[RMDB]
RNA sequence: GGGAACGACUCGAGUAGAGUCGAAAAGGCCUGUGCCCCCUUACCUUCCGUGUGGGAGUCCCCCUCAGCUGUCACCCUCCACUGCACCAGAACGCCCAUCAGGCUGAGCAGGGGCCAGAGUGCCAGCCUGUCUAGCGUACUUCGGUACGCUAGACAGAAAAGAAACAACAACAACAAC
Reactivity to DMS in 0.01 (KOAc 150mM, MgCl2 10mM, bicine 150mM(pH8.5), 24C), signal-to-noise 2, nucleotides 027 to 126: g010g020c000c040u000g010u000g010c030c020c000c010c030u030u010a100c120c030u010u000c070c040g020u000g040u010g000g000g010a040g010u000c020c010c020c020c030u000c040a130g000c020u000g000u000c040a050c040c020c000u010c010c010a060c040u000g020c040a110c080c100a130g010a070a100c170g000c050c020c000a110u000c120a060g010g000c020u000g000a120g010c060a050g020g010g010g020c210c100a010g010a070g020u010g010c000c000a030g000c030